Background
Conditions: 150 mM KOAc, 10 mM MgCl2 and 150 mM bicine (pH 8.5), 24 C. This 177-nucleotide RNA was probed chemically with DMS and 2A3. 2A3 adducts were read by reverse transcription with SuperScript II with manganese.

RNA sequence: GGGAACGACUCGAGUAGAGUCGAAAAAGCCAGUUCGUUAUAGCGCUGUAGCCCCAGCCGACGCUUAAUCGCCGAAAGUCCGUGAUGCAGGUAUUCGCAAUACUCCUGCCAGCCCUGUUCGUCGCCGCUUACGAGUACAGUUCGCUGUACUCGUAAGAAAAGAAACAACAACAACAAC
Reactivity to DMS in 0.01 (KOAc 150mM, MgCl2 10mM, bicine 150mM(pH8.5), 24C), signal-to-noise 5, nucleotides 027 to 126: a070g020c050c020a050g030u010u000c060g020u000u000a110u020a140g020c060g020c040u000g010u000a160g020c040c010c010c040a130g000c050c020g000a080c090g000c050u000u000a060a070u000c110g010c020c030g010a070a100a110g010u000c020c020g020u000g000a120u000g020c030a020g010g010u000a080u010u000c110g010c090a060a080u010a140c140u010c010c010u000g010c030c070a100g000c030c010c020u000g000u000u010c060g000u000c030g010c040c060g010
Reactivity to 2A3 in 0.01 (KOAc 150mM, MgCl2 10mM, bicine 150mM(pH8.5), 24C), signal-to-noise 3, nucleotides 027 to 126: a020g030c020c010a020g020u060u110c040g030u100u150a140u130a210g040c060g000c030u050g090u120a110g060c020c000c020c000a010g000c010c030g030a030c000g030c010u050u120a060a020u150c040g020c010c000g080a110a050a020g040u020c030c040g040u050g010a080u080g020c010a020g020g010u030a050u030u140c050g020c080a040a030u020a110c040u050c000c010u010g000c010c000a020g020c000c010c000u060g070u070u050c050g020u000c020g030c010c000g010

For 2A3, 3,387 sequencing reads were counted.